Source: RMDB library M2PK50, as collected in RNAgym. This 177-nucleotide RNA was probed chemically with DMS and 2A3. The RNA was probed in 150 mM KOAc, 10 mM MgCl2 and 150 mM bicine (pH 8.5) at 24 C. The DMS profile rests on 19,434 reads. For DMS the reverse transcriptase was MarathonRT.
RNA sequence: GGGAACGACUCGAGUAGAGUCGAAAAGUGGAUAGUUUCGACUAUCCACACAACUGAUGAUCUUACAGUGGAGGAUCAAGAAGAUGGCCAUCGGAUCCUCAAAUAGCACAGAGUUCGCUCUGUGCAAACACUGUUUAAGUUUCGACUUAAACAGUGUAAAAGAAACAACAACAACAAC
Reactivity to DMS in 0.01 (KOAc 150mM, MgCl2 10mM, bicine 150mM(pH8.5), 24C), signal-to-noise 9, nucleotides 027 to 126: g020u000g000g000a010u000a000g010u000u000u020c210g020a040c000u000a010u000c000c000a000c010a040c170a070a080c030u000g000a100u000g000a110u000c050u000u000a140c050a050g000u000g000g010a020g000g010a010u000c010a070a120g020a070a070g010a090u000g010g000c070c050a110u000c040g000g010a030u000c000c000u000c040a050a050a070u010a100g010c000a000c000a010g010a010g020u000u010c230g010c010u000c000u000g010u000g000c000a020a070
Reactivity to 2A3 in 0.01 (KOAc 150mM, MgCl2 10mM, bicine 150mM(pH8.5), 24C), signal-to-noise 9, nucleotides 027 to 126: g010u000g000g000a010u000a010g000u010u050u110c150g030a010c010u000a000u000c000c000a000c000a000c000a010a010c010u070g020a070u070g020a050u100c030u050u180a070c030a070g040u120g150g040a010g010g000a010u020c040a050a140g070a050a020g070a130u120g100g040c040c020a030u030c030g020g000a010u000c000c000u000c010a030a030a040u120a010g000c000a000c000a000g010a010g010u060u070c150g060c050u000c000u000g000u000g000c000a000a000